[RMDB]
RNA sequence: GGGAACGACUCGAGUAGAGUCGAAAAAUUACGGGCGGCGCAGGUGGAGCUGCGAUCCCUCCGCCCAUCGCGUGCUCUCUCGGUGGCGCAGACGCUGCAAACGGACAGGCGGGCCACCUGCAACGAACACAGUUGUACGAUUCGUCGUACAACUGUGAAAAGAAACAACAACAACAAC
Reactivity to 2A3 in 0.01 (KOAc 150mM, MgCl2 10mM, bicine 150mM(pH8.5), 24C), signal-to-noise 2, nucleotides 027 to 126: a010u210u120a070c100g010g000g010c030g010g000c020g000c030a010g000g040u060g060g060a060g070c010u010g010c010g010a040u010c000c000c000u040c020c000g000c000c000c000a010u050c020g010c020g030u080g020c000u030c030u000c020u050c140g050g030u030g010g010c030g010c130a050g020a140c070g000c050u020g010c040a170a130a030c040g010g090a080c030a030g020g050c000g020g040g010c010c000a020c010c000u000g010c000a030a040c020g090a050a000
Reactivity to DMS in 0.01 (KOAc 150mM, MgCl2 10mM, bicine 150mM(pH8.5), 24C), signal-to-noise 3, nucleotides 027 to 126: a100u040u010a100c150g020g020g000c000g030g010c300g020c050a050g000g010u000g000g000a120g030c020u000g030c000g000a080u000c020c020c030u010c010c030g010c020c030c010a050u000c050g000c060g030u000g000c020u000c040u010c040u000c100g010g020u000g000g000c030g040c070a110g010a150c040g000c030u000g020c050a040a080a140c200g010g000a060c080a090g000g000c020g010g000g010c030c010a060c010c020u020g000c030a150a060c110g010a070a120